Structure probing data (DMS and 2A3) for a 177-nucleotide construct. Values cover nucleotides 27 to 126.

RNA sequence: GGGAACGACUCGAGUAGAGUCGAAAACAAGAAGUCUCAGCCACAGUUCGCUGAUGGUCGGGAAGCACGGAACGGCGUGCCACAACCGAUCGAUUGGCACCUGGCCGGCGACGGCGACGGUGGCCGAAUAAUCACGGGACUUCGGUCCCGUGAUUAUAAAAGAAACAACAACAACAAC
Reactivity to DMS in 0.01 (KOAc 150mM, MgCl2 10mM, bicine 150mM(pH8.5), 24C), signal-to-noise 1, nucleotides 027 to 126: c090a200a080g000a110a100g000u000c060u010c020a190g020c000c010a030c040a070g010u000u000c130g010c010u030g000a070u000g030g020u010c000g000g010g000a140a170g020c000a000c000g010g010a070a140c200g020g000c010g000u030g000c010c100a080c140a100a150c010c010g020a020u010c000g010a090u000u000g040g000c020a100c150c130u000g020g010c020c040g000g000c160g010a080c030g010g010c000g030a030c020g030g040u000g010g010c010c090g010a020
Reactivity to 2A3 in 0.01 (KOAc 150mM, MgCl2 10mM, bicine 150mM(pH8.5), 24C), signal-to-noise 1, nucleotides 027 to 126: c040a040a010g260a110a050g150u000c010u030c070a000g000c000c000a040c010a080g020u140u110c020g020c000u050g000a080u110g090g000u070c030g000g030g070a080a050g000c040a000c030g050g090a180a060c080g300g000c010g070u060g070c030c050a070c020a050a070c000c000g000a010u040c010g060a080u070u100g000g000c000a020c050c070u070g060g000c030c000g040g000c030g080a040c010g020g030c020g020a010c030g030g010u010g020g060c010c030g020a000